[RMDB]
RNA sequence: GGGAACGACUCGAGUAGAGUCGAAAAGAUAGGGGGUUCGCCCCCUAUCAAAGGUGCUAUGUACUUUCUGCACCAAAGACGGAAAAACCGUCAAAGUACAAAAAACGAUGGCGUUCGCGCCAUCGAACGUAAUAAGAAGGUUCGCCUUCUUAUUACGAAAAGAAACAACAACAACAAC
Reactivity to 2A3 in 0.01 (KOAc 150mM, MgCl2 10mM, bicine 150mM(pH8.5), 24C), signal-to-noise 6, nucleotides 027 to 126: g010a000u000a000g000g000g000g010g010u010u010c020g100c000c000c000c000c000u000a000u000c000a000a010a000g000g000u010g000c030u110a050u260g040u020a020c010u040u140u080c100u120g000c000a000c000c000a050a030a000g000a010c010g000g030a240a080a030a090a080c010c000g010u010c000a000a010a020g000u010a000c000a010a150a010a020a020a010c020g000a000u000g010g000c020g020u050u070c260g010c000g000c080c000a000u000c000g000a010a000
Reactivity to DMS in 0.01 (KOAc 150mM, MgCl2 10mM, bicine 150mM(pH8.5), 24C), signal-to-noise 5, nucleotides 027 to 126: g000a010u000a010g010g020g000g020g010u000u010c240g020c010c000c000c000c000u000a000u000c000a050a110a130g000g010u000g010c010u010a050u010g010u000a010c010u000u000u010c130u010g020c000a010c000c010a050a080a090g000a020c000g020g000a110a160a070a170a130c010c000g000u000c010a030a020a040g020u000a000c000a010a060a070a080a070a150c030g000a000u000g010g010c010g020u000u000c220g020c000g010c000c000a000u000c000g010a030a060
Source: RMDB library M2PK50, as collected in RNAgym.
Chemical mapping of a 177-nucleotide RNA with 2A3 and DMS.
Conditions: 150 mM KOAc, 10 mM MgCl2 and 150 mM bicine (pH 8.5), 24 C.
For DMS, 5,888 sequencing reads were counted.
DMS adducts were read by reverse transcription with MarathonRT.
2A3 adducts were read by reverse transcription with SuperScript II with manganese.